The data come from the RNA Mapping Database (RMDB), libraries RFM100 and RFMREP. Structure probing data (2A3 and DMS) for a 177-nucleotide construct. High DMS reactivity at an A or C suggests that its Watson-Crick edge is free. For 2A3 the reverse transcriptase was SuperScript II with manganese. The reactions ran in a buffer of 150 mM KOAc, 10 mM MgCl2 and 150 mM bicine (pH 8.5), at 24 C.
[RMDB]
RNA sequence: GGGAACGACUCGAGUAGAGUCGAAAAAAUGGAAUCAGAUCUGGCGACAUUAUUCAGAAGCUGUUCCCUCAGUAAAUGCGCUGUUUUCCAUCAGGAAAUACAGGCUACCGAAACAUGCGUCUCUAUGCUACUAAUCCUAUUUCGAUAGGAUUAGUAGAAAAGAAACAACAACAACAAC
Reactivity to 2A3 in 0.01 (KOAc 150mM, MgCl2 10mM, bicine 150mM(pH8.5), 24C), signal-to-noise 9, nucleotides 027 to 126: a000a010u230g050g020a040a050u120c040a040g030a090u010c030u040g030g020c030g040a080c050a100u070u130a080u110u110c030a060g050a120a040g040c010u010g010u010u020c000c000c000u020c020a060g030u090a030a100a110u120g010c220g010c030u000g020u000u000u010u000c050c050a140u180c110a160g010g020a010a020a010u140a030c000a000g010g000c010u010a030c010c040g080a050a070a050c080a050u180g040c040g070u010c010u000c010u070a070u170g050
Reactivity to DMS in 0.01 (KOAc 150mM, MgCl2 10mM, bicine 150mM(pH8.5), 24C), signal-to-noise 9, nucleotides 027 to 126: a090a050u010g010g000a080a090u020c210a100g000a150u000c030u000g000g010c070g010a030c040a060u010u000a040u000u000c020a100g010a080a050g020c040u010g010u000u000c000c000c000u000c070a050g010u010a020a080a080u010g010c020g020c000u000g000u000u010u000u010c000c000a200u030c270a130g010g000a010a010a030u010a020c010a010g000g000c010u000a030c060c030g000a050a070a110c170a070u020g010c130g000u000c040u000c040u010a080u020g000